[RMDB]
RNA sequence: GGGAACGACUCGAGUAGAGUCGAAAAAUCAUCCGAGUUCAUGAUGAUCCAUGAUUUAUUUUUUAAUACCGCUUUGGAAUAUUUUUUUGCUUCUUCAACCAAUUCAGGAUAUUUUGAGAAAUUUGGAGUAUAAGCAAGUGUUCGCACUUGCUUAUACAAAAGAAACAACAACAACAAC
Reactivity to DMS in 0.01 (KOAc 150mM, MgCl2 10mM, bicine 150mM(pH8.5), 24C), signal-to-noise 2, nucleotides 027 to 126: a010u000c070a060u000c020c020g000a090g000u010u000c090a080u000g030a050u000g000a060u030c210c050a050u020g000a050u000u000u020a000u010u000u000u050u120u030a070a100u020a060c220c090g000c060u000u000u030g000g000a100a010u000a000u030u000u000u000u050u000u000g000c090u010u000c000u000u010c020a020a150c140c120a000a040u000u000c030a080g010g000a070u020a080u010u000u030u010g000a130g010a020a060a030u020u000u010g020g000a300
Reactivity to 2A3 in 0.01 (KOAc 150mM, MgCl2 10mM, bicine 150mM(pH8.5), 24C), signal-to-noise 6, nucleotides 027 to 126: a000u040c010a020u020c020c050g070a080g120u030u110c060a040u100g050a040u050g010a010u050c000c000a020u030g060a050u070u150u090a160u020u190u110u010u020u100a110a060u060a090c010c020g080c040u050u040u080g000g050a070a030u040a110u080u100u030u010u030u110u120g080c040u050u060c000u070u080c030a020a100c020c010a010a040u030u030c030a060g010g060a020u050a160u060u130u090u120g110a130g060a070a120a060u150u100u060g060g050a060

Structure probing data (DMS and 2A3) for a 177-nucleotide construct. The RNA was probed in 150 mM KOAc, 10 mM MgCl2 and 150 mM bicine (pH 8.5) at 24 C. The DMS profile rests on 1,861 reads. Values cover nucleotides 27 to 126. It was measured as part of the RMDB library OK1LIB. For 2A3 the reverse transcriptase was SuperScript II with manganese.